[RMDB]
RNA sequence: GGGAACGACUCGAGUAGAGUCGAAAAUCUGUUGACACGUAAUCGUAUAGUCGAAGUCGGACUACGGUUACCGCAACAGAAGUUAGAUUGCGUCAAGUCCGACUUGGACUAUUGUAAAAUCUAAUCACUUCUCCUUAGUAUUCGUACUGAGGAGAAGAAAAGAAACAACAACAACAAC
Reactivity to DMS in 0.01 (KOAc 150mM, MgCl2 10mM, bicine 150mM(pH8.5), 24C), signal-to-noise 9, nucleotides 027 to 126: u000c030u000g010u000u000g010a090c110a080c140g010u000a070a070u010c050g010u000a050u000a030g010u000c000g000a050a050g010u010c050g010g010a020c000u000a100c140g010g010u010u010a070c210c050g010c010a010a010c030a110g010a120a130g010u010u010a070g010a140u000u000g010c050g010u000c070a100a040g000u000c000c000g010a070c080u000u000g000g010a010c000u000a010u000u000g000u000a050a060a070a060u000c040u000a070a100u010c180a140
Reactivity to 2A3 in 0.01 (KOAc 150mM, MgCl2 10mM, bicine 150mM(pH8.5), 24C), signal-to-noise 9, nucleotides 027 to 126: u020c010u020g060u040u090g090a040c040a010c150g090u100a060a090u130c040g010u050a030u020a040g020u010c100g160a040a000g030u030c020g020g000a010c000u060a060c080g020g040u070u060a060c040c010g000c000a000a010c000a030g120a080a000g010u010u080a040g000a270u000u020g010c020g020u050c050a040a010g000u000c000c000g000a050c030u010u030g070g000a000c000u000a030u000u060g040u040a020a060a020a060u030c050u090a050a050u090c030a020